[RMDB]
RNA sequence: GGGAACGACUCGAGUAGAGUCGAAAACAGCCUCUAAUGUAGCUGGGAUUACAGUUGCCUGCUAUCACGCCCGGCUAAUUUUUGUAUUUUUAGUAAAGACGGGGUUUCACCAUGUUGGCCAGGCUGGCCUAAAUAAAGUCUUCGGACUUUAUUUAGGAAAAGAAACAACAACAACAAC
Reactivity to DMS in 0.01 (KOAc 150mM, MgCl2 10mM, bicine 150mM(pH8.5), 24C), signal-to-noise 7, nucleotides 027 to 126: c130a070g010c020c010u000c060u010a090a080u010g010u000a030g010c010u000g010g010g010a100u000u000a080c120a060g010u010u010g010c050c030u010g000c090u000a070u000c080a060c180g010c010c020c020g010g000c010u010a010a010u000u000u010u010u010g010u000a030u000u000u010u010u010a070g010u000a060a060a070g000a080c080g010g000g000g010u000u000u010c090a120c040c040a080u000g010u000u000g010g000c040c060a050g010g020c040u000g010g010
Reactivity to 2A3 in 0.01 (KOAc 150mM, MgCl2 10mM, bicine 150mM(pH8.5), 24C), signal-to-noise 2, nucleotides 027 to 126: c010a000g000c010c000u000c070u160a230a130u180g060u110a020g030c020u030g010g000g030a060u130u110a070c020a120g060u070u060g070c000c000u050g040c040u080a090u190c020a040c120g020c000c000c000g000g050c000u020a010a030u050u130u050u100u130g030u000a110u020u130u010u050u130a130g030u070a060a090a100g040a020c040g030g020g030g050u000u070u100c060a060c030c010a000u090g060u130u070g100g000c040c030a020g030g000c050u050g070g000